[RMDB]
RNA sequence: GGGAACGACUCGAGUAGAGUCGAAAAGAAAGAAAGAAAGUGGUUGGGUGGGUCCAUCGACCGUCGUGGCGUAUUCGGACGCUUUACCACGACGCGAGGAAAUAGCGAGACCGACCACCCCCUUUAACAGAGGUAUAGUAGUUCGCUACUAUACCAAGUUCUCAUAACAGUUCGCUGUUAUGAGAACAAAAGAAACAACAACAACAAC
Reactivity to 2A3 in 0.01 (KOAc 150mM, MgCl2 10mM, bicine 150mM(pH8.5), 24C), signal-to-noise 4, nucleotides 027 to 156: g060a020a040a000g070a060a100a010g080a060a070a010g040u060g040g030u090u070g060g020g030u070g010g040g040u000c010c010a080u120c020g030a060c040c020g000u000c000g000u000g030g010c040g030u070a120u080u190c090g100g030a010c030g020c040u100u120u110a050c010c010a000c000g000a000c000g000c020g000a030g000g070a070a130a070u110a060g080c020g010a040g050a080c010c000g000a000c000c000a000c000c000c000c000c000u000u130u040a120a060c080a030g080a050g140g000u000a000u000a000g000u000a000g010u030u030c180g020c100u000a000c000u000a000u000a000c000c000a000a000
Reactivity to DMS in 0.01 (KOAc 150mM, MgCl2 10mM, bicine 150mM(pH8.5), 24C), signal-to-noise 2, nucleotides 027 to 156: g020a180a090a160g000a110a060a120g000a070a020a110g030u000g000g020u010u000g000g030g030u000g000g000g000u000c000c000a070u000c100g000a050c110c000g010u000c020g020u000g020g050c040g030u010a090u000u000c090g000g020a220c060g000c100u010u010u010a030c020c010a030c000g000a020c000g000c020g030a100g040g000a030a070a110u000a140g050c040g000a140g010a080c000c020g000a040c000c010a020c000c000c000c020c010u010u000u000a060a200c110a180g000a140g030g020u010a000u000a010g010u000a010g000u010u000c300g020c000u000a010c000u000a020u000a000c010c000a010a060